[RMDB]
About this RNA: Chemical mapping of a 177-nucleotide RNA with 2A3 and DMS. The reactions ran in a buffer of 150 mM KOAc, 10 mM MgCl2 and 150 mM bicine (pH 8.5), at 24 C. For DMS, 3,134 sequencing reads were counted. 2A3 adducts were read by reverse transcription with SuperScript II with manganese. In probing experiments dimethyl sulfate is read out at A N1 and C N3, which are open when not base-paired. Reactivities are rounded to 0.1 and cut off at 0 and 3. For 2A3, 1,600 sequencing reads were counted.
RNA sequence: GGGAACGACUCGAGUAGAGUCGAAAACCUAGGGUUUGAGCGGUCGAACCCAGGGGGAGUGUGAUCCAGGUACCGCCGUAGAAACUGGAUUACGACGCCUACCCGGGAUUCAAACCCGGUCCCCCUCCUUAUAUGUUCACUUCGGUGAACAUAUAAGAAAAGAAACAACAACAACAAC
Reactivity to 2A3 in 0.01 (KOAc 150mM, MgCl2 10mM, bicine 150mM(pH8.5), 24C), signal-to-noise 2, nucleotides 027 to 126: c010c000u050a120g010g020g000u000u000u010g020a000g010c030g020g070u090c020g000a020a030c000c000c000a000g010g000g010g030g000a050g060u170g010u000g000a000u000c010c010a000g030g010u030a010c000c030g000c040c020g150u200a040g030a100a300a010c020u010g020g000a010u010u000a010c000g060a040c060g070c010c070u080a070c030c000c010g010g000g010a090u230u240c140a090a100a160c010c010c010g000g030u050c010c010c000c000c000u010c000
Reactivity to DMS in 0.01 (KOAc 150mM, MgCl2 10mM, bicine 150mM(pH8.5), 24C), signal-to-noise 3, nucleotides 027 to 126: c020c000u000a120g010g000g010u000u000u000g000a170g020c050g000g000u000c040g000a030a030c000c000c010a040g010g000g010g000g020a110g010u010g010u010g010a010u000c000c000a030g010g010u010a060c050c020g010c020c070g010u010a100g000a070a130a090c010u000g000g010a020u000u000a010c010g030a070c170g010c120c110u000a100c120c000c010g000g000g000a120u010u010c180a080a120a100c010c000c000g000g010u010c000c000c000c000c000u000c090